The record gives the reactivity of an RNA of 207 nucleotides to DMS and 2A3.
The data come from the RNA Mapping Database (RMDB), library OK3TST.
RNA sequence: GGGAACGACUCGAGUAGAGUCGAAAAGAAAAACAGUCAGCAAAUACCAUUAGAUGAACCAUUGUUCAAUCACUUUUAUGGGGUCUAUUCCUAUGACAACGGCAGUAAUAAUGCUGUUUUCACCAGCGAUCUUAGAGGUAUUCAGCCAUCCACUGCAAUAUCCACGUGUUUUCGAACACGUGGAUAUAAAAGAAACAACAACAACAAC
Reactivity to DMS in 0.01 (KOAc 150mM, MgCl2 10mM, bicine 150mM(pH8.5), 24C), signal-to-noise 1, nucleotides 027 to 156: g010a030a100a060a060a100c060a130g010u010c040a100g000c020a200a080a050u000a030c020c030a170u000u000a110g010a080u000g010a100a070c040c070a170u010u000g010u000u000c040a140a100u000c070a080c070u080u020u000u010a100u040g000g000g000g000u010c040u010a040u010u000c020c030u030a030u010g010a040c000a030a030c010g000g040c000a100g020u020a030a100u010a140a200u020g020c010u000g020u000u000u000u010c020a080c100c020a020g050c040g010a060u000c040u010u000a090g010a130g020g000u000a050u010u010c050a080g010c040c020a040u000c040c050a080c030u000g070c020a060
Reactivity to 2A3 in 0.01 (KOAc 150mM, MgCl2 10mM, bicine 150mM(pH8.5), 24C), signal-to-noise 3, nucleotides 027 to 156: g030a010a060a000a020a020c050a020g050u090c000a020g010c040a030a060a110u080a090c020c020a080u080u100a040g040a080u060g020a040a030c040c000a140u120u220g020u050u060c020a070a060u050c010a070c090u040u060u150u180a050u130g010g010g000g000u000c040u050a100u050u060c040c010u140a090u160g030a020c000a040a010c030g030g000c000a010g050u060a030a120u170a210a040u080g000c000u000g030u010u010u030u020c010a020c050c040a020g090c060g090a040u020c020u070u140a060g020a060g100g010u020a040u050u070c050a030g020c020c020a020u030c020c010a010c020u070g010c000a000

DMS adducts were read by reverse transcription with MarathonRT.
For 2A3 the reverse transcriptase was SuperScript II with manganese.
For 2A3, 1,499 sequencing reads were counted.